[RMDB]
RNA sequence: GGGAACGACUCGAGUAGAGUCGAAAAGACGCCUUUAGAAGAAGAGGCUAGGGGGUAUUCCGGUGUGGGAUACUUAGUAAUAUGCAACGCUAAUUGCAUAAGAUUGUAGGACGGAAUUUACAGUCUAUAGAGAUAAGCACGUUCGCGUGCUUAUCAAGGAAGUAAGUUCGUUCGCGAACUUACUUCCAAAAGAAACAACAACAACAAC
Reactivity to 2A3 in 0.01 (KOAc 150mM, MgCl2 10mM, bicine 150mM(pH8.5), 24C), signal-to-noise 2, nucleotides 027 to 156: g060a010c080g010c010c000u040u120u110a170g080a280a000g010a130a000g020a040g000g050c050u080a090g050g010g000g000g040u060a000u140u020c040c000g130g090u210g050u200g090g000g010a000u030a040c040u030u090a100g010u030a030a020u020a030u050g000c020a000a000c010g050c240u060a130a090u080u030g010c010a020u000a010a030g040a030u070u080g000u060a000g060g050a000c050g050g050a030a030u030u160u050a030c030a010g000u000c010u040a040u060a070g160a000g000a030u000a000a000g000c000a000c010g000u030u040c150g000c010g090u000g020c000u000u010a000u000c000a000a000

This 207-nucleotide RNA was probed chemically with 2A3.
2A3 is a SHAPE reagent: it acylates the 2'-hydroxyl of flexible nucleotides of all four kinds.
The reactions ran in a buffer of 150 mM KOAc, 10 mM MgCl2 and 150 mM bicine (pH 8.5), at 24 C.
The 2A3 profile rests on 738 reads.